[RMDB]
RNA sequence: GGGAACGACUCGAGUAGAGUCGAAAAUCAAAUACGACAGUACCAUUUGCAUUUAAUGUUUUGGUAAUCAAUUGAUAAUGUGCAUCUCUCAUCGGACUAUCGACCAAAUCAACAGAACAAAAAUGUAGCGCUAGAAUAAAUUCGUUUAUUCUAGCGCAAAAGAAACAACAACAACAAC
Reactivity to DMS in 0.01 (KOAc 150mM, MgCl2 10mM, bicine 150mM(pH8.5), 24C), signal-to-noise 1, nucleotides 027 to 126: u010c020a040a020a130u000a170c120g040a060c200a090g000u000a140c030c050a030u000u000u000g010c000a050u000u000u000a070a030u000g030u000u000u000u000g000g010u000a030a140u000c040a050a080u000u000g000a000u000a080a090u020g000u000g000c060a090u000c020u000c040u000c100a070u000c050g000g000a090c050u000a050u010c070g050a140c020c050a040a040a090u020c060a070a020c120a100g000a030a050c090a040a070a070a030a100u000g070u000a100
Reactivity to 2A3 in 0.01 (KOAc 150mM, MgCl2 10mM, bicine 150mM(pH8.5), 24C), signal-to-noise 2, nucleotides 027 to 126: u030c000a050a040a030u140a040c090g000a000c030a070g080u000a070c020c010a050u030u060u050g010c040a030u080u080u240a280a100u040g000u030u040u040u030g010g000u010a020a050u040c050a010a080u040u050g010a020u070a150a070u060g050u020g080c010a040u030c020u000c000u020c080a030u050c050g050g000a020c020u050a020u110c010g100a000c030c100a020a160a020u130c020a010a040c010a070g170a070a020c030a050a030a300a030a010u300g040u100a020